[RMDB]
RNA sequence: GGGAACGACUCGAGUAGAGUCGAAAAGAUGAUAGUCGCACUGUCCUUAGACAGUGCACGAGAGAAUCUUAGUUCUUAGUGUGUCUAAGGACACACUAAAGUGUGAGCACUUCUCGUGGCUAUCAUACAUAGGUGUGGGAUUCGUCUCAUAUCUAUGAAAAGAAACAACAACAACAAC
Reactivity to 2A3 in 0.01 (KOAc 150mM, MgCl2 10mM, bicine 150mM(pH8.5), 24C), signal-to-noise 9, nucleotides 027 to 126: g140a010u010g000a000u000a000g010u010c050g000c000a000c000u010g010u010c030c050u070u050a070g000a000c000a000g000u010g010c000a000c000g050a060g000a000g020a020a040u190c030u060u050a090g040u110u010c010u000u010a000g000u000g000u000g000u000c010u020a120a170g190g000a000c000a000c000a000c000u010a000a020a010g020u040g020u030g000a040g020c020a010c030u010u000c000u000c010g010u030g010g000c000u000a000u000c000a000u020a020
Reactivity to DMS in 0.01 (KOAc 150mM, MgCl2 10mM, bicine 150mM(pH8.5), 24C), signal-to-noise 9, nucleotides 027 to 126: g000a040u000g000a010u000a000g010u000c040g020c010a010c000u000g000u000c000c300u030u040a110g000a010c000a000g010u000g010c020a030c090g000a050g000a010g000a050a020u020c090u010u010a100g010u010u000c020u000u000a010g010u000g010u000g000u000c000u010a130a160g030g000a010c000a010c000a000c000u000a000a010a030g010u010g010u020g000a070g010c110a060c050u000u000c000u000c000g010u070g010g000c000u000a000u000c000a010u000a110